Source: RMDB library RFM100, as collected in RNAgym. An RNA of 177 nucleotides, treated with 2A3 and read out base by base. For 2A3, 869 sequencing reads were counted. The RNA was probed in 150 mM KOAc, 10 mM MgCl2 and 150 mM bicine (pH 8.5) at 24 C.
RNA sequence: GGGAACGACUCGAGUAGAGUCGAAAAGAAAGAAAAGGUGUCCUACAGGAGUGACCUGAGAAUCACAUGCCCGCAUCACCCAUCUUUGCUCUCAUGUGUUCUCAGGUCGCCCCUGCUGGACUCCCAAGGGAUAAGACCACUUCGGUGGUCUUAUCCCAAAAGAAACAACAACAACAAC
Reactivity to 2A3 in 0.01 (KOAc 150mM, MgCl2 10mM, bicine 150mM(pH8.5), 24C), signal-to-noise 1, nucleotides 027 to 126: g020a040a020a000g070a000a150a000a000g030g000u060g010u000c000c000u020a010c020a000g000g010a010g000u010g010a000c000c010u000g000a000g080a000a000u300c020a010c010a030u020g010c010c000c040g000c020a040u040c000a090c060c050c000a150u120c110u050u050u060g000c000u010c000u000c000a000u000g000u000g000u000u000c000u000c000a000g060g000u000c000g010c010c000c000c000u010g040c050u000g000g000a000c020u000c000c000c000a060a100